[RMDB]
RNA sequence: GGGAACGACUCGAGUAGAGUCGAAAAUAUUGUCCAUAUCACUAUCAGCAUUUUGGUCAAAGCUAUUCAGUGAGUCUCCAGGAAGUUGCAAACUUUCCCACAUCCUCCUAUCUUCUUCUGAGCCCUCCAUACAUGCAGAAUUCGUUCUGCAUGUAUGAAAAGAAACAACAACAACAAC
Reactivity to DMS in 0.01 (KOAc 150mM, MgCl2 10mM, bicine 150mM(pH8.5), 24C), signal-to-noise 9, nucleotides 027 to 126: u010a090u000u010g010u000c020c020a070u010a080u000c040a080c090u010a080u010c080a060g020c060a080u010u000u010u000g010g010u000c080a060a090a120g000c040u000a070u000u000c090a060g010u010g010a080g010u000c020u000c030c050a090g010g000a050a060g010u000u000g020c110a060a070a090c090u000u000u000c010c010c010a100c120a080u000c030c020u000c020c020u000a060u000c030u000u000c040u000u000c040u000g000a130g000c010c010c010u000c070
Reactivity to 2A3 in 0.01 (KOAc 150mM, MgCl2 10mM, bicine 150mM(pH8.5), 24C), signal-to-noise 4, nucleotides 027 to 126: u100a010u020u110g040u000c010c000a020u040a010u130c040a020c070u090a070u170c030a010g050c070a060u030u040u060u190g040g010u060c030a000a090a010g010c010u020a040u140u100c030a010g020u010g090a030g030u010c010u010c030c000a010g010g040a050a040g040u090u090g070c060a080a090a110c030u040u060u040c000c040c000a050c010a050u080c010c010u020c000c000u030a040u060c030u070u020c000u060u010c010u030g020a030g050c000c000c000u000c030